This 177-nucleotide RNA was probed chemically with 2A3 and DMS. For DMS the reverse transcriptase was MarathonRT. Reactivities are given for positions 27 through 126.

[RMDB]
RNA sequence: GGGAACGACUCGAGUAGAGUCGAAAAGGAAAUCAAAAUUAGAGAAGUGAUGGCUGAGAUUAGAAAGGUAAUGAAGGUAGGAUAUUGUCACUGGUUUACGGUAACCACCACCACCAAAAUAAAAAAACACUAUUGCAUAGUUCGCUAUGCAAUAGUGAAAAGAAACAACAACAACAAC
Reactivity to 2A3 in 0.01 (KOAc 150mM, MgCl2 10mM, bicine 150mM(pH8.5), 24C), signal-to-noise 2, nucleotides 027 to 126: g020g000a040a020a060u140c040a070a080a070a100u240u160a080g020a020g000a210a000g020u050g050a050u080g020g000c040u070g040a040g010a120u040u050a020g070a090a080a000g100g020u090a030a070u110g030a070a000g000g020u060a020g050g010a030u040a080u110u120g070u060c000a000c070u020g000g070u010u050u080a050c020g060g000u020a050a010c010c010a010c010c000a010c000c000a000c030c000a030a090a040a050u140a020a050a010a000a000a000a000
Reactivity to DMS in 0.01 (KOAc 150mM, MgCl2 10mM, bicine 150mM(pH8.5), 24C), signal-to-noise 3, nucleotides 027 to 126: g020g000a040a110a100u000c090a080a040a070a130u020u010a120g000a070g010a070a040g010u000g010a050u020g000g000c050u000g020a070g000a070u000u030a050g010a020a100a040g000g020u010a050a060u010g010a060a040g000g010u000a050g010g000a080u010a040u000u000g000u000c060a070c050u000g000g000u000u010u000a070c070g000g000u010a040a040c050c050a110c050c020a060c040c010a050c030c080a040a040a040a070u050a030a040a030a060a050a060a070
Background
The data come from the RNA Mapping Database (RMDB), library M2PK90. Conditions: 150 mM KOAc, 10 mM MgCl2 and 150 mM bicine (pH 8.5), 24 C.